[RMDB]
RNA sequence: GGGAACGACUCGAGUAGAGUCGAAAAGGGAAGGUGUCCGUGUCUUGGCCAAAGGAUGCAGGCGGAAACAAAAGGGAAAUGCCGAAACCGUUUGCUCCAUGAGUCCUCAAUGGGCAUCGGGGUGCGGCUGAUAAAUGCGCUUCGGCGCAUUUAUCAGAAAAGAAACAACAACAACAAC
Reactivity to 2A3 in 0.01 (KOAc 150mM, MgCl2 10mM, bicine 150mM(pH8.5), 24C), signal-to-noise 3, nucleotides 027 to 126: g000g020g040a040a130g030g020u020g020u000c030c030g020u000g040u070c100u060u080g000g000c020c020a070a150a140g050g000a030u210g000c000a000g020g000c030g030g060a160a130a020c090a020a050a100a060g000g000g100a240a300a020u250g130c020c020g010a030a000a010c000c010g020u000u000u070g030c020u030c000c020a090u070g000a020g060u120c000c000u020c050a080a040u050g000g000g010c000a020u010c040g000g000g000g050u140g000c030g000g000
Reactivity to DMS in 0.01 (KOAc 150mM, MgCl2 10mM, bicine 150mM(pH8.5), 24C), signal-to-noise 2, nucleotides 027 to 126: g010g010g040a050a210g000g040u010g000u060c000c030g020u000g000u050c100u000u000g060g000c010c040a080a230a060g010g000a030u080g050c000a010g000g010c030g000g060a050a030a060c050a020a070a140a210g060g020g020a030a090a160u050g040c000c010g000a090a080a090c000c000g000u000u010u000g010c000u000c000c020a100u000g000a260g010u000c010c050u020c140a000a030u000g000g000g010c000a020u000c030g000g000g000g020u040g000c050g000g000
The record gives the reactivity of an RNA of 177 nucleotides to 2A3 and DMS. DMS adducts were read by reverse transcription with MarathonRT. 2A3 adducts were read by reverse transcription with SuperScript II with manganese. For DMS, 2,331 sequencing reads were counted. 2A3 is a SHAPE reagent: it acylates the 2'-hydroxyl of flexible nucleotides of all four kinds. Source: RMDB library OK1LIB, as collected in RNAgym. Conditions: 150 mM KOAc, 10 mM MgCl2 and 150 mM bicine (pH 8.5), 24 C.